[RMDB]
RNA sequence: GGGAACGACUCGAGUAGAGUCGAAAAGACAUCAAGAAGGGCAGUUGUGGUGCCCGUCAAGGCCUGCUGACUUUCCUGGAGGCCGAGGGAAUACAGCAGGGUUGGAGCCACCCCACAACCUGGGCUGACAUAGGGGGUGGUUCGCCACCCCCUAUGUAAAAGAAACAACAACAACAAC
Reactivity to DMS in 0.01 (KOAc 150mM, MgCl2 10mM, bicine 150mM(pH8.5), 24C), signal-to-noise 2, nucleotides 027 to 126: g030a050c090a100u010c070a090a180g010a140a060g020g010g040c030a020g020u000u000g000u010g000g000u010g000c020c000c030g020u000c070a060a170g010g000c010c020u000g010c000u000g010a220c180u000u000u020c000c010u020g020g000a170g020g000c050c020g010a080g000g000g000a050a050u000a110c020a010g000c010a110g000g010g000u000u000g020g000a110g040c040c070a080c020c020c010c020a130c080a020a020c080c060u010g010g010g030c090u000g010
An RNA of 177 nucleotides, treated with DMS and read out base by base. High DMS reactivity at an A or C suggests that its Watson-Crick edge is free. It was measured as part of the RMDB library OK2TRN.